The record gives the reactivity of an RNA of 177 nucleotides to DMS and 2A3. The reactions ran in a buffer of 150 mM KOAc, 10 mM MgCl2 and 150 mM bicine (pH 8.5), at 24 C.
[RMDB]
RNA sequence: GGGAACGACUCGAGUAGAGUCGAAAAGGACGCGGUUCUUAUCUGGUCAGGCUGAAUGUGAGCAACAUCCUGCGCUUCAUCAAUAACAGGGGGCAGCCAGCCUUCCCUGCUGAUAAGGGGACGGAAGUCACCUACCUGGCUUCGGCCAGGUAGGUGAAAAAGAAACAACAACAACAAC
Reactivity to DMS in 0.01 (KOAc 150mM, MgCl2 10mM, bicine 150mM(pH8.5), 24C), signal-to-noise 3, nucleotides 027 to 126: g000g000a100c060g000c110g000g000u000u010c040u000u010a050u000c070u000g030g000u000c080a050g030g020c070u010g010a090a020u010g030u010g000a170g020c060a070a080c100a080u000c030c010u000g010c100g010c050u000u010c100a030u000c080a080a090u010a070a090c080a060g010g010g000g000g010c070a110g000c100c060a080g000c010c010u000u000c010c000c010u010g000c060u010g000a050u000a080a070g010g030g000g000a070c140g010g010a120a090g000
Reactivity to 2A3 in 0.01 (KOAc 150mM, MgCl2 10mM, bicine 150mM(pH8.5), 24C), signal-to-noise 2, nucleotides 027 to 126: g030g020a010c030g030c100g120g020u020u060c020u060u090a080u010c030u020g040g000u040c010a050g050g000c010u020g020a100a050u090g070u050g080a080g040c020a000a080c000a080u040c000c030u050g030c030g010c090u150u120c050a110u030c000a050a190u130a210a030c010a040g020g040g000g040g000c020a010g050c030c010a000g010c000c000u060u020c010c000c000u000g000c050u030g020a070u030a070a020g010g000g000g010a010c010g010g030a060a010g060
For 2A3, 1,696 sequencing reads were counted.
For 2A3 the reverse transcriptase was SuperScript II with manganese.